The record gives the reactivity of an RNA of 177 nucleotides to 2A3.
RNA sequence: GGGAACGACUCGAGUAGAGUCGAAAAGCAAGGCGCAGCUGUCGGCUGCCUGAAGGGGUUGAUAGAUGGGAUUGAUGGAUGGAAGAGUCCCAUUGUCCCCCUAAUGCCGCUGUGGAGUGGUCCAAAGAGUAUCCGCGUACUUCGGUACGCGGAUACUAAAAGAAACAACAACAACAAC
Reactivity to 2A3 in 0.01 (KOAc 150mM, MgCl2 10mM, bicine 150mM(pH8.5), 24C), signal-to-noise 1, nucleotides 027 to 126: g020c150a040a100g000g040c000g000c030a000g000c000u100g180u240c050g080g080c030u070g000c000c000u000g000a000a000g000g030g000g060u270u300g010a000u000a080g110a030u030g020g000g000a030u070u000g070a190u090g180g120a070u200g080g000a120a000g010a000g020u000c060c000c070a000u000u000g000u000c000c000c000c000c000u000a020a000u010g000c000c000g000c000u030g010u120g000g130a190g000u010g000g000u090c000c000a100a100a000g080
The RNA was probed in 150 mM KOAc, 10 mM MgCl2 and 150 mM bicine (pH 8.5) at 24 C.